[RMDB]
RNA sequence: GGGAACGACUCGAGUAGAGUCGAAAAGAUAUGGAGCGGCAGGGAGCGUCGGUUCGGAAACGAACCAGACGCGAAGAACUGUGCGCUCCUAAGUCAAAUCCUGCUCUAGCUUCGGCUAGAGCAGGAACUAUCUCUUGGAGUUCGCUCCAAGAGAUAGAAAAGAAACAACAACAACAAC
Reactivity to 2A3 in 0.01 (KOAc 150mM, MgCl2 10mM, bicine 150mM(pH8.5), 24C), signal-to-noise 2, nucleotides 027 to 126: g020a000u010a000u050g000g000a020g000c000g020g000c020a010g000g000g040a040g020c000g000u000c010g000g000u010u020c010g000g000a000a000a000c010g010a000a000c010c020a010g000a010c010g010c000g010a090a010g000a000a010c010u020g010u150g240c020g000c010u010c000c000u010a010a000g010u000c010a000a050a150u040c000c000u010g010c000u000c000u000a010g020c020u060u080c300g170g000c000u000a010g010a000g000c000a000g000g000a000a010
Reactivity to DMS in 0.01 (KOAc 150mM, MgCl2 10mM, bicine 150mM(pH8.5), 24C), signal-to-noise 2, nucleotides 027 to 126: g010a000u000a020u030g020g000a020g020c020g000g000c000a020g000g000g000a020g020c000g040u000c010g000g020u000u000c000g020g000a010a010a030c010g010a010a010c000c010a040g010a010c000g020c000g000a070a110g000a220a290c000u000g010u000g020c020g030c000u000c000c000u000a010a090g010u000c010a130a110a170u000c000c000u000g000c010u000c000u000a010g020c000u000u020c240g030g010c000u010a010g010a010g020c010a000g000g010a020a050